[RMDB]
RNA sequence: GGGAACGACUCGAGUAGAGUCGAAAAUGCAACUCAUCGGCAGAUGUAAAAAUGCCAGUUAAAUAUAACUGCAAAAAAUACAAACACUUACGCAUUAGCAGCUUAAUAACCUGCCUGCGUGACCAGUCGCGAAUUGCUUGUGUUUGCUGAUUGGUCUUGAAGUCAAUUACUUCGGUAAUUGACUUCAAAAAGAAACAACAACAACAAC
Reactivity to 2A3 in 0.01 (KOAc 150mM, MgCl2 10mM, bicine 150mM(pH8.5), 24C), signal-to-noise 2, nucleotides 027 to 156: u110g010c020a020a080c030u000c040a000u000c000g010g000c010a010g000a010u040g020u300a010a010a000a000a000u000g000c010c000a000g010u020u070a060a300a100u300a130u050a090a030c020u010g000c000a010a080a000a050a050a000u230a090c100a030a220a010c050a040c110u060u020a010c010g000c000a020u170u000a020g000c000a000g000c010u050u050a030a010u040a070a020c000c000u010g000c000c000u000g000c000g010u010g000a000c000c000a000g020u000c000g000c010g000a020a040u030u130g060c090u150u150g110u070g010u100u030u000g000c050u070g000a010u000u000g000g000u000c000u000
Reactivity to DMS in 0.01 (KOAc 150mM, MgCl2 10mM, bicine 150mM(pH8.5), 24C), signal-to-noise 1, nucleotides 027 to 156: u000g020c050a010a050c010u000c000a020u010c000g020g000c010a090g010a080u000g020u020a010a060a040a040a150u000g000c010c040a010g010u010u000a070a160a140u000a150u010a030a010c010u010g020c080a010a020a100a020a010a170u010a050c050a090a060a130c030a030c080u000u010a010c010g010c000a090u000u000a070g000c000a010g000c020u000u000a110a120u000a170a050c280c000u000g040c010c060u010g050c010g050u020g000a020c010c020a050g020u000c020g090c050g000a080a080u000u000g020c040u000u000g010u010g020u000u000u020g000c000u020g030a060u000u000g000g030u000c010u010
Structure probing data (2A3 and DMS) for a 207-nucleotide construct.
For DMS the reverse transcriptase was MarathonRT.
Source: RMDB library ARCHII, as collected in RNAgym.
The reactions ran in a buffer of 150 mM KOAc, 10 mM MgCl2 and 150 mM bicine (pH 8.5), at 24 C.